[RMDB]
RNA sequence: GGGAACGACUCGAGUAGAGUCGAAAAGAGUUAUCUCAACACAAAGUAAUAACCGUUAAGGGUGUAGCCUAUGAUCAACACAAAUAUGAAAUAUUGGUCCUGGAUGGGCGCGUUUUCUCUGUCAAUGUGCCAUAGUGCAGUUCGCUGCACUAUGGCAAAAAGAAACAACAACAACAAC
Reactivity to DMS in 0.01 (KOAc 150mM, MgCl2 10mM, bicine 150mM(pH8.5), 24C), signal-to-noise 1, nucleotides 027 to 126: g000a230g000u010u010a040u030c000u010c000a030a020c000a060c300a000a180a150g000u000a080a000u040a170a170c060c050g080u070u000a000a050g000g000g020u000g000u000a130g000c000c000u000a070u150g000a140u000c050a000a190c220a050c140a080a120a060u090a300u000g000a000a000a070u040a090u020u020g000g040u000c020c080u010g000g000a000u000g000g000g050c050g000c120g020u000u000u000u000c070u000c000u000g000u000c070a040a080u070g000
Background: Chemical mapping of a 177-nucleotide RNA with DMS. Source: RMDB library RFM100, as collected in RNAgym. Reactivities are given for positions 27 through 126.